[RMDB]
RNA sequence: GGGAACGACUCGAGUAGAGUCGAAAAACAUUGAGCACGCGAUUCGUGCCGAGGUGGAGGCAUGAUAAACGACGUUGUGGUCCGAUUCACGAACGGCAACGACGUUGACGCCGAGCGCGUCAAAUUCAAAGACGGCGGAUGGGUCGGCGUGCGCGGCGCAUAACGUGCUCUUCGGAGCACGUUAUGCAAAAGAAACAACAACAACAAC
Reactivity to 2A3 in 0.01 (KOAc 150mM, MgCl2 10mM, bicine 150mM(pH8.5), 24C), signal-to-noise 2, nucleotides 027 to 156: a000c140a120u150u220g050a000g060c020a030c100g040c040g030a060u030u030c010g020u050g030c010c030g030a070g010g100u110g030g060a010g000g000c040a030u070g000a020u050a040a070a010c000g020a000c000g000u000u010g000u060g050g030u000c010c010g060a110u130u210c090a080c220g090a070a000c020g030g020c010a020a010c000g010a020c000g010u000u030g010a000c040g010c010c010g020a030g050c210g010c000g020u010c020a060a120a040u220u130c050a040a010a060g010a010c050g020g100c080g000g050a040u070g080g050g010u020c000g030g010c000g000u010g030c000g000c050g040g000c040